[RMDB]
RNA sequence: GGGAACGACUCGAGUAGAGUCGAAAAGUUUAUCAUAAACUUGGAGAACGUGUACGCCAAGCUAUCUUAAACACUGUUAAAUUUUGUGACCACAUGGUCAAGGCUGGUUUAGUCGGUGUGCUCACACAGGGUGGCAACUUCGGUUGCCACAAAAGAAACAACAACAACAAC
Reactivity to DMS in 0.01 (KOAc 150mM, MgCl2 10mM, bicine 150mM(pH8.5), 24C), signal-to-noise 5, nucleotides 027 to 129: g030u010u000u050a070u030c190a100u030a040a090a180c010u000u000g000g000a120g020a070a040c200g030u000g050u020a180c160g050c040c040a060a030g060c110u040a080u040c050u000u000a080a070a030c070a100c100u070g030u030u040a090a060a080u040u020u030u040g090u000g040a090c000c000a060c170a080u000g020g040u040c040a050a040g020g010c090u030g000g000u030u010u020a060g010u030c040g040g000u030g010u020g020c060u040c070a100c110a000c110a160g040g060
Reactivity to 2A3 in 0.01 (KOAc 150mM, MgCl2 10mM, bicine 150mM(pH8.5), 24C), signal-to-noise 5, nucleotides 027 to 129: g000u020u030u020a160u140c040a050u130a040a060a030c000u000u000g000g000a060g020a110a070c120g040u070g030u190a050c050g030c000c030a000a000g000c000u010a030u050c040u060u090a020a050a010c070a020c070u110g040u130u120a080a170a160u090u130u060u110g040u030g010a020c000c000a060c020a120u100g060g020u030c060a020a000g030g000c020u010g070g000u050u050u100a010g000u010c010g000g000u010g000u010g040c000u030c030a030c000a000c000a060g050g130